[RMDB]
RNA sequence: GGGAACGACUCGAGUAGAGUCGAAAACGCCUGCUACGUCGAGACCGGUGAUCACCAGGCAGCCAAGGGCGACGGCGAUUUCUUCGCUCCGUCGGCGCCCUCGGUGACGCUGUACCCGCCGUCGCGGCGUCUUAGUCACUUUCGAGUGACUAAGACGAAAAGAAACAACAACAACAAC
Reactivity to DMS in 0.01 (KOAc 150mM, MgCl2 10mM, bicine 150mM(pH8.5), 24C), signal-to-noise 6, nucleotides 027 to 126: c110g000c040c000u040g030c030u020a020c030g000u000c000g000a050g010a120c280c030g010g000u000g000a140u010c030a050c060c020a110g000g010c040a210g010c010c030a170a110g000g000g000c020g000a030c300g000g000c100g000a090u010u030u010c100u030u000c060g010c050u020c080c010g030u000c060g000g000c000g000c050c010c000u020c090g010g010u000g020a030c070g000c000u000g000u010a100c090c050c000g010c020c020g010u000c040g010c010g010g010
Reactivity to 2A3 in 0.01 (KOAc 150mM, MgCl2 10mM, bicine 150mM(pH8.5), 24C), signal-to-noise 9, nucleotides 027 to 126: c050g040c000c010u040g010c020u020a010c010g030u020c010g020a020g020a130c060c040g010g020u030g030a300u010c000a000c020c000a020g050g000c040a040g020c030c010a060a060g140g000g010c010g000a030c020g010g020c040g050a070u120u190u110c080u110u090c080g020c050u070c050c000g040u060c030g010g000c000g000c000c000c000u040c070g000g010u010g000a010c020g000c010u030g020u110a120c000c010c000g010c020c010g020u020c020g000c010g020g000
Conditions: 150 mM KOAc, 10 mM MgCl2 and 150 mM bicine (pH 8.5), 24 C. Structure probing data (DMS and 2A3) for a 177-nucleotide construct. It was measured as part of the RMDB library OK1LIB. In probing experiments dimethyl sulfate is read out at A N1 and C N3, which are open when not base-paired. Values cover nucleotides 27 to 126.